Source information:
Conditions: 150 mM KOAc, 10 mM MgCl2 and 150 mM bicine (pH 8.5), 24 C. An RNA of 177 nucleotides, treated with 2A3 and DMS and read out base by base. 2A3 adducts were read by reverse transcription with SuperScript II with manganese.
RNA sequence: GGGAACGACUCGAGUAGAGUCGAAAAAAAAAUCGCCUUGUCGUCUCAUGCCUACGAUGGGCUAAAGAAGCACUGUGGCGAAACAUGCACUGGGUGGCCAUUGCGUCUGCGGUAGACCCGCCGAUUCUAAAGACACUUAGUUCGCUAAGUGUCUUUAAAAAGAAACAACAACAACAAC
Reactivity to 2A3 in 0.01 (KOAc 150mM, MgCl2 10mM, bicine 150mM(pH8.5), 24C), signal-to-noise 8, nucleotides 027 to 126: a000a000a000a000a010u030c010g000c010c000u030u050g040u040c030g060u010c010u010c020a070u150g020c000c010u090a140c100g150a120u290g020g000g000c000u020a040a090a020g060a060a010g010c060a010c100u060g060u090g080g000c010g010a030a030a010c030a020u130g010c020a010c070u040g010g040g020u100g090g040c010c010a060u040u120g010c020g010u000c030u040g030c010g000g040u060a050g060a130c010c000c000g020c000c010g030a040u130u030c030
Reactivity to DMS in 0.01 (KOAc 150mM, MgCl2 10mM, bicine 150mM(pH8.5), 24C), signal-to-noise 9, nucleotides 027 to 126: a020a040a050a060a060u000c050g010c010c000u000u000g010u000c060g000u010c020u000c040a100u020g000c010c010u010a110c190g030a120u030g000g010g010c010u010a110a080a030g010a170a070g010c100a030c100u020g010u010g010g010c010g010a040a060a060c160a050u020g000c050a050c060u010g000g010g020u020g020g010c010c020a050u000u010g000c060g020u000c050u010g000c020g000g010u020a110g000a140c070c010c010g010c020c050g000a100u020u010c080